[RMDB]
RNA sequence: GGGAACGACUCGAGUAGAGUCGAAAAAAACAGACUCUAUCAUGAUGAGAUUCGCAUUAGAACCGGAAUUUUUAAUAGGAAGAGCCGGAAGAGGUAUGGCAGAGGCUGAAAGCCCUGUCGUCGAUGCUAGGGACAUAGCAUUCGUGCUAUGUCCCUAAAAAGAAACAACAACAACAAC
Reactivity to 2A3 in 0.01 (KOAc 150mM, MgCl2 10mM, bicine 150mM(pH8.5), 24C), signal-to-noise 2, nucleotides 027 to 126: a000a000a000c080a000g040a020c020u020c000u020a030u020c070a200u200g050a090u070g000a050g010a070u030u160c090g000c050a030u080u100a030g000a000a040c000c000g060g010a000a000u040u000u000u050u130a210a300u190a060g110g000a030a030g000a010g230c000c000g000g000a000a000g020a090g000g000u040a010u050g000g000c030a000g130a040g090g000c020u130g190a090a020a020g000c010c000c000u000g000u000c000g020u110c010g000a000u040g090c000
Reactivity to DMS in 0.01 (KOAc 150mM, MgCl2 10mM, bicine 150mM(pH8.5), 24C), signal-to-noise 2, nucleotides 027 to 126: a030a030a080c220a220g010a030c030u040c000u000a010u040c060a120u000g000a030u000g000a270g010a070u060u000c050g020c020a010u020u010a030g000a080a030c010c020g010g020a050a030u000u040u020u070u000a100a090u030a140g000g000a050a020g000a080g020c010c000g000g010a110a050g000a080g000g000u050a020u000g000g000c030a000g030a130g060g010c010u070g000a120a050a200g020c000c010c000u000g000u000c000g010u010c040g000a050u010g010c100